[RMDB]
The record gives the reactivity of an RNA of 207 nucleotides to 2A3.
RNA sequence: GGGAACGACUCGAGUAGAGUCGAAAAGACCGGCGCCAUCUUGAGCGACGUCUCCCCAAGGGCCUCGAUGGAGGUCCGCGGGCUCAUGGCCAAGCAGCUCUUGGUGACGGUUUGCCAGCGGUCUAUCCACUCCACGGCGCACUGGCGGACGCGGACCGAACGGUCAGGAUUUCGAUCCUGACCGUUCAAAAGAAACAACAACAACAAC
Reactivity to 2A3 in 0.01 (KOAc 150mM, MgCl2 10mM, bicine 150mM(pH8.5), 24C), signal-to-noise 2, nucleotides 027 to 156: g020a030c010c020g000g030c010g000c030c000a070u080c030u130u110g000a010g010c010g040a060c040g000u010c070u050c010c000c000c000a010a060g010g000g000c010c000u010c050g270a300u250g230g020a000g000g010u000c000c000g010c030g000g030g000c020u110c100a100u090g020g020c010c000a040a020g010c020a020g020c050u000c000u060u040g030g000u020g030a050c040g020g060u040u020u100g060c010c000a020g010c040g040g010u000c030u010a100u070c050c020a050c070u040c040c010a070c080g050g000c080g040c030a040c060u050g050g000c010g040g000a040c110g030c000g060g000a020c060c020
Values cover nucleotides 27 to 156.